An RNA of 207 nucleotides, treated with 2A3 and read out base by base. The RNA was probed in 150 mM KOAc, 10 mM MgCl2 and 150 mM bicine (pH 8.5) at 24 C. Source: RMDB library ARCHII, as collected in RNAgym. For 2A3, 551 sequencing reads were counted. Values cover nucleotides 27 to 156.
RNA sequence: GGGAACGACUCGAGUAGAGUCGAAAAAUCAUGAUCUGAUUUGUAAGCCUACUUGGGUCUUGAGUAUUUACUUGUAAGAACGGAAUUCUUUGUUUUGUAAUGGAUAGUUGCAACUCCGUAAAAAAGAAUUCAGUCAAAUUUUUCUUACAUUGAACCACCUAACCACUGAGUUCGCUCAGUGGUUAGGAAAAGAAACAACAACAACAAC
Reactivity to 2A3 in 0.01 (KOAc 150mM, MgCl2 10mM, bicine 150mM(pH8.5), 24C), signal-to-noise 1, nucleotides 027 to 156: a010u020c030a020u110g100a070u080c020u100g020a000u020u000u010g040u050a010a010g000c010c000u000a000c000u020u020g000g000g000u000c000u010u030g000a000g040u110a110u130u130u080a110c050u050u040g010u060a010a010g000a060a020c020g060g000a010a020u000u000c000u050u030u020g050u060u140u060u010g030u020a050a060u090g000g130a130u130a300g100u010u070g070c040a020a070c050u000c070c130g060u140a020a200a000a000a000a000g000a000a000u000u000c000a020g080u110c020a030a100a300u030u130u020u050u000c000u020u010a010c010a020u000u090g000a010a000c000c000a000